[RMDB]
RNA sequence: GGGAACGACUCGAGUAGAGUCGAAAAGUGGACGCUGCCUGGCCAGCGGCAGCCCGCUCUGCGCGUCAGGGACGGCGUCACCCGCGCCGUACGCGUUAUCUGGCGCGCCGGCCGGCGCGCAUCGCGAACCGACUAAUCGGUUCGCCGAUUAGUCGGUAAAAGAAACAACAACAACAAC
Reactivity to 2A3 in 0.01 (KOAc 150mM, MgCl2 10mM, bicine 150mM(pH8.5), 24C), signal-to-noise 2, nucleotides 027 to 126: g060u050g040g000a030c050g000c030u090g020c010c060u080g040g040c030c010a040g010c040g010g030c020a010g040c020c010c010g000c020u070c050u050g010c040g000c020g030u040c030a100g070g060g040a020c010g000g000c010g020u030c040a130c010c000c000g020c010g000c020c030g060u080a060c030g040c010g050u070u050a100u100c060u090g010g000c020g010c040g030c020c010g090g060c020c030g060g000c030g000c050g000c050a080u110c030g000c010g030a030
Reactivity to DMS in 0.01 (KOAc 150mM, MgCl2 10mM, bicine 150mM(pH8.5), 24C), signal-to-noise 4, nucleotides 027 to 126: g040u000g010g000a060c040g000c010u000g020c010c020u000g040g000c020c080a240g010c060g010g020c100a090g030c090c030c040g000c030u000c130u000g010c010g020c040g020u010c030a050g020g010g000a060c020g000g000c010g010u010c120a110c040c010c050g000c020g010c000c000g010u010a050c080g000c070g000u010u010a060u010c100u000g000g040c080g050c010g060c120c300g000g000c060c080g090g030c100g040c120g040c100a040u000c050g010c050g000a130
The data come from the RNA Mapping Database (RMDB), library OK2TRN. This 177-nucleotide RNA was probed chemically with 2A3 and DMS. The DMS profile rests on 3,614 reads. The RNA was probed in 150 mM KOAc, 10 mM MgCl2 and 150 mM bicine (pH 8.5) at 24 C. For 2A3, 4,216 sequencing reads were counted.